[RMDB]
RNA sequence: GGGAACGACUCGAGUAGAGUCGAAAAGGCCCCCGAACCUGCCCUCGUGGCCCGCGAGGCUUUCCCGCGCGCCGGUGGUCGCGCGCGUCGCGGCCUGGAUCAGGGAGGCAUGCUCUCCCUCCGGUUGUCAGCGAGAUAUAUUCGUAUAUCUCGCUGAAAAAGAAACAACAACAACAAC
Reactivity to 2A3 in 0.01 (KOAc 150mM, MgCl2 10mM, bicine 150mM(pH8.5), 24C), signal-to-noise 3, nucleotides 027 to 126: g050g010c000c030c000c000c010g040a060a040c020c030u040g030c020c000c010u010c020g060u060g060g050c060c030c010g000c010g000a040g010g050c000u040u030u020c000c010c000g000c010g020c030g000c010c000g040g040u070g010g030u070c020g000c000g010c030g050c080g130u220c010g000c000g000g000c000c020u040g020g020a060u110c040a020g000g030g010a020g010g010c060a060u250g020c030u020c000u010c050c000c010u010c010c000g000g040u060u120g100
Reactivity to DMS in 0.01 (KOAc 150mM, MgCl2 10mM, bicine 150mM(pH8.5), 24C), signal-to-noise 3, nucleotides 027 to 126: g000g010c050c010c030c040c030g030a090a140c070c030u010g000c130c010c010u010c080g050u010g000g000c070c020c040g000c010g000a080g010g040c030u000u000u010c010c000c000g000c230g040c120g010c000c020g010g020u020g000g030u020c030g030c020g010c050g020c110g000u030c010g020c020g010g000c030c010u010g010g010a210u010c070a040g010g010g000a010g000g020c030a110u030g030c080u030c000u000c000c000c000u000c000c000g000g010u020u010g000